[RMDB]
This 207-nucleotide RNA was probed chemically with DMS and 2A3. As a SHAPE reagent, 2A3 marks flexible, mostly unpaired nucleotides at the ribose 2'-OH. For 2A3, 1,084 sequencing reads were counted. The RNA was probed in 150 mM KOAc, 10 mM MgCl2 and 150 mM bicine (pH 8.5) at 24 C.

RNA sequence: GGGAACGACUCGAGUAGAGUCGAAAAUGUUCAUUCGUGAACAGAACCGCGUACUACAUCGUUGGACAAUGAUGCAAUCUCCCCACCAGGGUCCCAAAUAGGACCCUGAGGAUUGUUGAGUCCUGCGAUGUAUCGCCUCAGGAGCAUUCGUGCUCAAUUGUCUAUAUCGGUUCGCCGAUAUAGACAAAAAAGAAACAACAACAACAAC
Reactivity to DMS in 0.01 (KOAc 150mM, MgCl2 10mM, bicine 150mM(pH8.5), 24C), signal-to-noise 2, nucleotides 027 to 156: u020g030u000u000c000a100u000u020c250g030u000g020a010a010c020a060g020a080a110c060c090g060c080g010u000a080c030u000a020c000a030u000c000g070u000u020g050g000a090c030a110a150u020g020a100u010g000c010a050a060u000c040u000c300c040c050c070a300c170c020a040g010g040g070u000c000c000c010a010a130a160u020a070g010g000a010c010c000c000u020g000a090g030g010a060u000u000g000u000u000g010a080g000u010c010c000u010g000c030g000a020u000g000u000a010u000c010g010c000c050u000c110a260g030g000a040g010c080a060u000u000c200g080u000g000c000u000c010a010a110
Reactivity to 2A3 in 0.01 (KOAc 150mM, MgCl2 10mM, bicine 150mM(pH8.5), 24C), signal-to-noise 1, nucleotides 027 to 156: u030g000u000u000c020a010u080u080c300g080u030g020a010a000c000a010g020a020a040c020c020g000c010g010u040a160c030u000a000c020a000u000c020g020u000u030g000g000a000c030a250a280u200g030a070u170g000c000a000a000u010c050u020c010c010c020c050a040c000c000a000g000g000g000u000c030c000c000a160a250a010u110a110g010g010a010c000c000c000u000g000a000g050g000a010u000u010g020u000u000g080a000g000u000c000c000u010g010c040g000a000u000g000u000a000u120c020g000c060c030u080c090a080g220g000a000g000c030a040u070u080c170g150u060g000c000u030c000a020a100